[RMDB]
RNA sequence: GGGAACGACUCGAGUAGAGUCGAAAAUGCGCUGCGUAAUGCGCAGCUGGUCACGUUCACCGCGAUGGAUAUCGACGACCCCCGGGCGCUGGUUCCGAUUCUUGGUGUCGGUUUGGCGCACCGGCCGCACUACGUCACGCUUCGGCGUGACGUAGUGAAAAGAAACAACAACAACAAC
Reactivity to 2A3 in 0.01 (KOAc 150mM, MgCl2 10mM, bicine 150mM(pH8.5), 24C), signal-to-noise 1, nucleotides 027 to 126: u140g010c030g010c030u050g000c030g070u080a040a230u300g080c030g060c000a000g020c010u050g080g000u040c030a000c150g040u080u020c010a030c040c040g020c070g070a040u120g120g040a030u050a070u280c050g050a100c060g050a040c080c000c000c000c000g000g030g000c010g000c020u030g200g000u180u050c000c000g020a000u050u100c020u100u250g150g010u110g020u090c050g020g030u000u030u090g000g000c000g020c030a020c000c000g000g010c050c010g000
Reactivity to DMS in 0.01 (KOAc 150mM, MgCl2 10mM, bicine 150mM(pH8.5), 24C), signal-to-noise 1, nucleotides 027 to 126: u000g010c150g020c010u000g050c040g030u010a080a070u000g000c020g010c030a000g000c030u010g010g020u010c040a180c140g030u000u010c050a090c020c020g010c100g000a020u000g010g000a100u000a070u010c040g030a100c050g000a200c040c010c070c000c000g000g000g000c020g010c020u010g000g020u010u000c010c010g010a050u000u000c140u000u020g000g000u000g040u000c000g000g010u000u010u000g010g010c010g020c020a050c000c000g000g000c160c090g000